[RMDB]
RNA sequence: GGGAACGACUCGAGUAGAGUCGAAAAAUGUGCGGCAAAGAAACAUUGUUUAUGCAAAGACACUUCGCAAUGUGUGCUCAAACAUUGCUUAUUCAAACACGCUUCACAAUGUGCGACAAAGAAACAUAAAACGUUUAGUACUUCGGUACUAAACGAACAGUGUGGAUUUCUUCGGAAAUCCACACUGAAAAGAAACAACAACAACAAC
Reactivity to 2A3 in 0.01 (KOAc 150mM, MgCl2 10mM, bicine 150mM(pH8.5), 24C), signal-to-noise 3, nucleotides 027 to 156: a000u090g050u090g130c040g050g010c090a040a060a010g050a020a140a020c010a010u020u010g020u080u030u050a120u080g040c020a000a070a070g090a000c010a000c050u060u070c030g000c020a000a000u000g010u000g030u040g040c040u060c090a040a070a010c000a010u000u010g000c010u030u070a130u140u120c070a040a080a010c060a020c110g000c020u020u050c030a000c000a030a080u070g060u040g040c020g050a030c070a010a120a020g130a080a080a010c040a030u130a070a100a000a000c000g000u000u000u000a000g000u010a000c000u020u030c170g020g000u000a000c000u000a000a000a000c000g000a020a000
Reactivity to DMS in 0.01 (KOAc 150mM, MgCl2 10mM, bicine 150mM(pH8.5), 24C), signal-to-noise 1, nucleotides 027 to 156: a110u000g000u000g030c040g000g060c090a070a010a080g010a150a080a010c010a030u000u000g000u000u060u000a080u010g030c000a170a090a120g020a100c020a030c070u000u000c260g010c080a030a040u000g000u000g020u000g010c060u000c150a120a050a040c030a000u000u000g030c000u010u010a050u000u000c040a160a190a050c040a060c030g000c060u000u010c130a120c030a050a070u000g000u000g010c030g020a130c020a100a010a200g010a110a100a090c070a070u000a020a000a100a140c040g030u000u000u000a010g040u000a000c000u010u000c230g080g050u000a030c000u000a000a160a050c000g000a000a050